Structure probing data (2A3 and DMS) for a 177-nucleotide construct. For 2A3, 1,522 sequencing reads were counted. Source: RMDB library 15KREP, as collected in RNAgym. The reactions ran in a buffer of 150 mM KOAc, 10 mM MgCl2 and 150 mM bicine (pH 8.5), at 24 C. DMS adducts were read by reverse transcription with MarathonRT.

[RMDB]
RNA sequence: GGGAACGACUCGAGUAGAGUCGAAAAGGUUGCAUUCUUCCAUCUGAGUGCACUAUGUUUAGGGAUGCAGAGGGCCGUAUGACACCAUACUGCCAUGAUCCUACUGUUUUGCCUGGGGCUUUUGCGUAGACUUUAUUUACUUCGGUAAAUAAAGUCUAAAAGAAACAACAACAACAAC
Reactivity to 2A3 in 0.01 (KOAc 150mM, MgCl2 10mM, bicine 150mM(pH8.5), 24C), signal-to-noise 2, nucleotides 027 to 126: g050g030u120u080g000c010a010u010u050c010u140u060c090c030a210u030c070u110g020a020g040u030g030c030a010c030u070a040u120g090u030u100u100a030g040g000g000a040u070g120c020a000g050a200g150g000g000c000c010g010u000a020u000g030a040c030a010c090c060a020u000a050c010u020g040c000c020a010u060g000a020u030c050c000u050a050c020u030g110u090u130u100u080g010c010c010u020g010g000g010g040c020u050u100u130u080g000c030g050u020
Reactivity to DMS in 0.01 (KOAc 150mM, MgCl2 10mM, bicine 150mM(pH8.5), 24C), signal-to-noise 3, nucleotides 027 to 126: g010g000u010u010g000c010a010u000u000c000u010u010c140c100a090u010c120u000g000a060g040u000g000c040a050c060u000a070u000g010u010u000u000a120g020g020g020a060u000g010c040a030g010a160g000g010g030c020c090g010u000a010u010g000a190c300a120c300c020a030u000a040c020u000g000c000c000a100u000g000a080u010c020c010u000a090c120u000g000u010u000u000u000g020c020c020u000g030g010g000g020c160u000u000u000u000g000c070g010u010